[RMDB]
RNA sequence: GGGAACGACUCGAGUAGAGUCGAAAACAACACGGUCCUUGACGCUCAAAGGAUGCUGAGGACCACCAGAGCCGCCCUCAAGAACCAGCUGGGGACAAAGACCGUGUGCGCCUGCAGGCUCCUGGCCCGUCCAUAUGUCGUUCGCGACAUAUGGACGAAAAGAAACAACAACAACAAC
Reactivity to DMS in 0.01 (KOAc 150mM, MgCl2 10mM, bicine 150mM(pH8.5), 24C), signal-to-noise 1, nucleotides 027 to 126: c100a070a040c050a040c040g040g000u010c010c000u000u000g030a140c170g020c000u000c050a100a080a260g020g010a040u050g040c040u000g000a050g000g000a030c010c050a000c060c060a070g000a100g010c050c110g030c050c000c000u000c020a050a080g020a120a170c050c000a050g010c140u020g010g030g000g000a140c020a040a040a060g000a000c010c020g040u000g010u000g010c090g030c020c020u000g020c070a020g000g010c070u010c080c050u000g020g020c070c050
Reactivity to 2A3 in 0.01 (KOAc 150mM, MgCl2 10mM, bicine 150mM(pH8.5), 24C), signal-to-noise 2, nucleotides 027 to 126: c000a020a010c050a030c060g000g020u090c050c000u040u080g090a160c070g040c090u070c050a130a160a050g130g020a080u100g060c020u050g010a030g000g000a070c000c040a000c050c000a030g030a010g060c050c060g020c030c010c040u040c050a060a010g050a110a040c000c000a010g070c070u080g000g000g090g000a000c050a030a040a030g020a010c000c000g040u020g030u010g040c040g030c000c000u070g050c030a050g010g020c010u030c000c020u090g060g000c000c060

Overview:
Conditions: 150 mM KOAc, 10 mM MgCl2 and 150 mM bicine (pH 8.5), 24 C. Chemical mapping of a 177-nucleotide RNA with DMS and 2A3. High DMS reactivity at an A or C suggests that its Watson-Crick edge is free. It was measured as part of the RMDB library OK2TST. DMS adducts were read by reverse transcription with MarathonRT.